[RMDB]
An RNA of 207 nucleotides, treated with DMS and 2A3 and read out base by base. It was measured as part of the RMDB library M2RFPK. The RNA was probed in 150 mM KOAc, 10 mM MgCl2 and 150 mM bicine (pH 8.5) at 24 C. Reactivities are given for positions 27 through 156. 2A3 is a SHAPE reagent: it acylates the 2'-hydroxyl of flexible nucleotides of all four kinds.
RNA sequence: GGGAACGACUCGAGUAGAGUCGAAAACAGAUAAGAAAAGACCGAGAGGUUCAAGCUUAUAGGGCAGAAAGCGGGUGACAGCAGUACUAAACAUUCCCUGUGGCUGAGACGAAGGUAGUACUCCAACAAAACGAGUACUAGUUCGCUAGUACUCGAACAUAGGCAUGUGGUUCGCCACAUGCCUAUGAAAAGAAACAACAACAACAAC
Reactivity to DMS in 0.01 (KOAc 150mM, MgCl2 10mM, bicine 150mM(pH8.5), 24C), signal-to-noise 1, nucleotides 027 to 156: c010a300g000a130u000a020a090g000a110a080a120a180g000a030c020c000g010a160g000a210g000g070u000u000c060a030a220g000c030u000u000a020u000a000g050g000g020c040a100g000a050a110a060g020c050g030g020g010u000g020a030c040a120g010c000a070g000u000a120c050u010a030a100a120c020a180u010u000c010c010c020u000g030u000g000g030c000u010g050a110g040a090c070g000a060a070g020g030u010a110g000u000a070c000u000c000c000a050a110c040a030a020a060a140c060g000a030g000u000a020c000u000a010g010u000u000c300g010c030u000a010g000u000a020c000u000c010g000a020a100
Reactivity to 2A3 in 0.01 (KOAc 150mM, MgCl2 10mM, bicine 150mM(pH8.5), 24C), signal-to-noise 2, nucleotides 027 to 156: c060a020g100a070u270a210a030g040a060a080a030a010g010a030c010c030g070a040g010a020g190g000u090u060c040a010a010g010c000u070u020a000u110a100g000g050g000c060a010g060a040a050a020g060c020g000g020g090u080g030a020c020a010g010c010a010g030u050a050c080u100a050a110a020c040a050u050u110c010c000c000u010g030u040g020g010c010u010g010a020g000a040c060g020a100a030g030g000u010a010g020u010a070c050u030c100c000a000a020c030a040a140a020a030c010g000a000g000u000a000c000u000a000g020u040u070c160g000c120u000a000g000u010a010c000u000c020g000a020a000